This 177-nucleotide RNA was probed chemically with DMS and 2A3. DMS adducts were read by reverse transcription with MarathonRT. The 2A3 profile rests on 697 reads.

RNA sequence: GGGAACGACUCGAGUAGAGUCGAAAAGAUCCAAUCAUAGGAAUAAUAGGAACUAUGGUAUCGAACUUCUUAAUAGCAUUACCUAUUAGAAAUGAAUUUUCUAGCAUUUGACUCCGUACCAUUGAAGCCACAGAAGUCUAUUCGUAGACUUCUGUGGAAAAGAAACAACAACAACAAC
Reactivity to DMS in 0.01 (KOAc 150mM, MgCl2 10mM, bicine 150mM(pH8.5), 24C), signal-to-noise 1, nucleotides 027 to 126: g020a140u010c030c080a080a050u000c050a080u010a060g060g000a120a050u000a040a020u000a110g000g000a120a200c040u010a010u000g000g000u010a050u030c060g020a040a110c180u010u000c080u020u010a050a030u000a020g080c030a050u000u000a070c120c000u000a000u000u010a080g000a050a020a050u020g020a060a050u000u000u000u000c070u000a090g020c040a050u000u000u000g000a080c050u000c050c050g000u010a130c070c060a130u020u010g000a170a110g010
Reactivity to 2A3 in 0.01 (KOAc 150mM, MgCl2 10mM, bicine 150mM(pH8.5), 24C), signal-to-noise 1, nucleotides 027 to 126: g060a040u050c000c000a000a050u110c070a020u000a110g010g030a090a060u070a110a010u060a080g030g060a060a020c010u010a010u050g030g000u020a070u040c050g060a060a110c030u160u150c050u150u240a150a150u060a070g020c010a090u040u300a180c030c020u080a080u080u010a040g030a000a100a070u090g040a030a080u200u000u000u050c010u020a030g000c040a050u010u000u070g030a020c030u000c030c010g030u030a010c000c030a050u000u130g040a060a000g080
The data come from the RNA Mapping Database (RMDB), library OK2TST.